[RMDB]
RNA sequence: GGGAACGACUCGAGUAGAGUCGAAAACACAAUGUGCGCCAUUAACAUUGUUUAUGCAAGCACGUUUCGCAAUGUACGGCGCAGAAACAUUGCCAACACAAAUACGCUCCACGAUGUGCGGCACAGAAAAAGCUCGCGCACUUCGGUGCGCGAGCAAUCGUACAUUUAUGUUCGCAUAAAUGUACGAAAAAGAAACAACAACAACAAC
Reactivity to 2A3 in 0.01 (KOAc 150mM, MgCl2 10mM, bicine 150mM(pH8.5), 24C), signal-to-noise 4, nucleotides 027 to 156: c050a000c010a010a060u050g030u010g020c000g000c000c020a070u140u170a100a050c030a020u050u060g090u090u190u160a130u130g020c070a070a110g090c090a050c160g020u040u080u050c050g010c000a000a030u010g000u020a020c060g000g010c020g010c010a000g020a000a060a000c030a010u020u050g040c010c010a130a030c040a060c040a110a170a020u190a110c060g010c040u060c050c010a080c090g070a100u070g020u040g040c020g010g050c070a030c050a070g220a040a090a020a000a000g000c000u010c000g000c000g000c000a010c000u040u030c090g090g010u000g000c010g050c000g000a000g000c000a000a010
Reactivity to DMS in 0.01 (KOAc 150mM, MgCl2 10mM, bicine 150mM(pH8.5), 24C), signal-to-noise 2, nucleotides 027 to 156: c130a040c030a030a040u000g020u000g030c030g000c030c030a130u000u000a050a100c040a050u000u000g040u010u000u010a030u010g010c040a140a180g000c070a090c110g000u000u010u000c100g000c020a070a080u000g020u000a060c070g000g000c010g060c020a050g000a130a120a100c000a010u000u000g040c010c030a070a120c060a120c020a060a070a110u010a040c090g000c040u000c000c030a070c120g000a120u000g040u010g000c040g020g000c030a110c060a170g010a030a090a080a120a150g040c000u000c000g030c000g100c020a030c000u020u010c300g030g050u000g020c000g070c000g000a000g020c000a000a000